RNA sequence: GGGAACGACUCGAGUAGAGUCGAAAAGUUUUGAUAGAAAGAGGACAACACAUUGCAAUAGUCGGGCCAGGAGGUGAGGAAUGCCUGGAUAACUCUGGGCCAGAUCUCUAUCUUGAUUGUAGAGACGCUCUCCCAAACGAUUCGUCGUUUGGGAGAGAAAAGAAACAACAACAACAAC
Reactivity to DMS in 0.01 (KOAc 150mM, MgCl2 10mM, bicine 150mM(pH8.5), 24C), signal-to-noise 2, nucleotides 027 to 126: g000u030u080u020u020g000a150u040a050g000a050a120a040g000a060g000g010a070c140a040a090c110a090c180a140u020u020g060c050a070a080u010a100g010u020c090g000g000g030c000c000a100g030g000a060g010g000u040g000a060g000g000a120a060u050g000c000c000u000g000g000a020u000a060a190c290u070c000u030g010g000g030c020c170a030g000a130u000c040u000c000u000a010u040c010u030u020g010a130u040u000g050u020a010g000a020g040a010c140g050
Reactivity to 2A3 in 0.01 (KOAc 150mM, MgCl2 10mM, bicine 150mM(pH8.5), 24C), signal-to-noise 2, nucleotides 027 to 126: g040u050u070u140u150g120a090u040a060g000a010a000a000g110a040g040g000a000c030a090a010c010a030c040a120u060u080g000c040a020a050u070a170g000u010c040g030g010g080c010c000a000g000g080a000g140g040u100g050a040g010g060a100a030u150g000c000c000u010g000g000a040u060a090a070c040u010c000u020g010g010g000c000c000a060g040a110u010c000u000c010u030a170u090c010u000u120g120a130u040u130g040u020a030g010a000g000a030c020g020